[RMDB]
RNA sequence: GGGAACGACUCGAGUAGAGUCGAAAAUAAGGAAGUCUAUGCUGCUGUUAUUGUCCAUUGAGUGUCUUCUACAUGCAGAAUGCUGGGUCAAGCCCUGUAAGGCUGUAGGGGACGAAGGGAAAGUGACUUAAGGAGGGACGAGGGAAUGAAGGGCAUACAGUACCUCACUAUUCGUAGUGAGGUACUGAAAAGAAACAACAACAACAAC
Reactivity to DMS in 0.01 (KOAc 150mM, MgCl2 10mM, bicine 150mM(pH8.5), 24C), signal-to-noise 1, nucleotides 027 to 156: u010a090a110g010g000a050a040g060u000c060u000a110u000g010c030u010g040c010u010g030u020u000a070u000u010g020u010c000c000a180u000u010g000a160g040u010g030u000c010u000u000c000u000a030c030a030u000g030c030a140g000a170a110u000g030c060u000g010g030g060u000c070a080a180g090c020c030c040u010g070u020a090a180g040g030c010u050g020u000a070g010g000g000g000a000c010g030a060a050g000g000g010a000a080a070g010u000g000a070c030u000u000a050a100g000g000a180g000g000g000a060c060g000a170g000g000g020a070a050u010g010a080a070g020g030g000c030a060u000a170
Reactivity to 2A3 in 0.01 (KOAc 150mM, MgCl2 10mM, bicine 150mM(pH8.5), 24C), signal-to-noise 5, nucleotides 027 to 156: u200a040a020g050g020a040a040g030u040c050u080a110u170g020c000u010g010c000u030g070u110u070a130u090u050g060u020c030c030a080u100u190g060a070g070u150g000u030c010u010u010c000u000a020c000a030u300g020c000a020g060a220a070u110g040c000u070g020g000g010u090c130a190a120g080c000c000c000u030g030u070a050a060g080g000c000u000g010u010a000g000g010g000g000a000c010g000a020a020g040g000g000a020a080a080g040u060g030a020c010u070u050a070a030g030g000a030g030g030g010a030c090g040a070g000g000g020a020a060u150g020a050a100g010g000g000c030a000u090a060